An RNA of 177 nucleotides, treated with 2A3 and DMS and read out base by base. For DMS the reverse transcriptase was MarathonRT. For 2A3 the reverse transcriptase was SuperScript II with manganese. For 2A3, 2,626 sequencing reads were counted. Conditions: 150 mM KOAc, 10 mM MgCl2 and 150 mM bicine (pH 8.5), 24 C.

[RMDB]
RNA sequence: GGGAACGACUCGAGUAGAGUCGAAAAUAGGGAAUUGGGACAGACUCUGUGGGGAGGAGAAGUCUUACCAUAUUGGGAGGGCAAUUGGAUUUGUGUUUGGAGACUUUGUUUACGGUGUGAGCGUUAAAUAUUAGUCGAGUUUCGACUCGACUAAUAUAAAAGAAACAACAACAACAAC
Reactivity to 2A3 in 0.01 (KOAc 150mM, MgCl2 10mM, bicine 150mM(pH8.5), 24C), signal-to-noise 3, nucleotides 027 to 126: u150a010g010g040g000a030a160u150u050g010g010g030a030c030a060g060a060c020u010c040u090g060u110g060g010g000g030a050g010g010a010g040a050a010g020u010c010u050u040a100c010c010a010u060a120u190u110g030g000g030a130g000g000g000c030a020a070u080u050g050g000a040u050u030u100g080u020g060u020u080u030g020g000a020g000a010c000u120u110u060g040u030u100u030a020c050g030g040u040g010u020g080a020g070c030g000u010u030a100a180
Reactivity to DMS in 0.01 (KOAc 150mM, MgCl2 10mM, bicine 150mM(pH8.5), 24C), signal-to-noise 2, nucleotides 027 to 126: u010a140g000g000g000a140a110u010u010g000g010g010a160c150a110g000a110c060u010c060u000g000u000g010g010g000g030a100g010g000a070g000a080a060g010u000c020u010u010a160c040c030a080u000a120u000u020g010g010g000a100g010g010g010c060a020a080u000u000g000g000a110u000u000u010g030u010g010u000u010u000g010g010a110g000a050c060u000u000u000g010u010u000u000a040c140g000g040u000g030u000g000a090g000c100g010u010u000a010a060